Background:
The record gives the reactivity of an RNA of 207 nucleotides to 2A3.
RNA sequence: GGGAACGACUCGAGUAGAGUCGAAAACUUGCGACUUACACGUAGGGCGAGGGGUGGGCGAAAGUUGCCAUGAGACCGUAACUUUGGUAGUCAUUGAUAAAGGGGCAGGUCUCGCUCUUUUGUCAUUUUAAUCUCUAACAGUUCGCUGUUAGAGAAACUUUCAAGACAUGUUCGCAUGUCUUGAAAGAAAAGAAACAACAACAACAAC
Reactivity to 2A3 in 0.01 (KOAc 150mM, MgCl2 10mM, bicine 150mM(pH8.5), 24C), signal-to-noise 3, nucleotides 027 to 156: c040u030u110g010c010g060a120c060u110u130a020c200a010c150g050u050a030g000g020g000c090g090a100g000g000g000g070u300g020g010g000c040g040a060a010a080g080u080u070g050c010c010a080u090g000a000g000a020c010c000g030u090a040a130c090u120u080u030g030g000u010a050g130u100c080a120u100u100g020a010u040a060a030a020g000g000g000g000c030a010g040g000u000c000u000c000g000c000u040c000u000u030u020u020g000u030c010a010u000u050u010u220a080a090u010c000u000c000u000a000a000c010a000g040u070u080c160g070c110u000g010u000u000a000g000a000g000a000a000a000

Source information:
For 2A3 the reverse transcriptase was SuperScript II with manganese. It was measured as part of the RMDB library M2RFPK.